[RMDB]
The data come from the RNA Mapping Database (RMDB), library RNAMAK. An RNA of 207 nucleotides, treated with 2A3 and read out base by base. For 2A3, 2,468 sequencing reads were counted.
RNA sequence: GGGAACGACUCGAGUAGAGUCGAAAAAGAACGUUUCGACGUUCUAAAAAAGGGGUCACGGAACCGAGGAUCUGUGAACUACGACUGAAGCCUCCACGGUCGCACAGGGAGGUUCCUAUGACGGAGGCACCCAAAAAGGAUGAUUUCGAUCAUCCAAGUUGGACGAUUAUUUCGAUAAUCGUCCAACAAAAGAAACAACAACAACAAC
Reactivity to 2A3 in 0.01 (KOAc 150mM, MgCl2 10mM, bicine 150mM(pH8.5), 24C), signal-to-noise 3, nucleotides 027 to 156: a020g010a010a000c010g000u010u110u200c220g070a020c000g000u010u000c000u080a110a110a000a000a020a000g100g030g020g020u070c050a010c110g000g000a000a000c000c020g020a240g030g010a020u080c000u000g020u010g030a130a100c110u190a080c300g020a000c000u020g040a070a010g030c010c030u020c010c030a040c030g020g000u010c020g030c050a010c000a010g000g000g030a020g000g000u000u000c010c000u120a160u110g020a030c090g000g000a000g000g010c000a030c000c000c010a040a060a050a030a000g000g000a000u010g010a000u080u170u190c190g070a020u020c030a000u000c000c000a020a030